Background: Source: RMDB library RFM100, as collected in RNAgym. Chemical mapping of a 177-nucleotide RNA with 2A3. The 2A3 profile rests on 395 reads. The reactions ran in a buffer of 150 mM KOAc, 10 mM MgCl2 and 150 mM bicine (pH 8.5), at 24 C.

RNA sequence: GGGAACGACUCGAGUAGAGUCGAAAAAGACGCGGACGUACGCGUCCGCGUCAACCUGAGAUACCUGUUCCUUUGUCCAGAUCACCUUUUGAGAUAUCAGUGGAAGAAUUAAUACUUCAUAAUCCAAUUUCAUGAUAGCGUUCGCGCUAUCAUGAAAAAAAGAAACAACAACAACAAC
Reactivity to 2A3 in 0.01 (KOAc 150mM, MgCl2 10mM, bicine 150mM(pH8.5), 24C), signal-to-noise 1, nucleotides 027 to 126: a000g000a010c030g020c000g020g000a030c000g020u140a000c270g060c000g220u080c030c000g000c010g040u000c000a000a000c000c000u070g070a070g000a070u190a080c070c090u090g110u040u050c030c000u120u000u040g000u150c050c050a030g070a050u120c080a070c020c020u110u040u050u030g090a090g040a130u130a020u130c070a070g000u120g060g000a040a000g000a040a070u190u020a170a060u160a160c120u140u060c050a050u010a100a050u100c020c030a040a210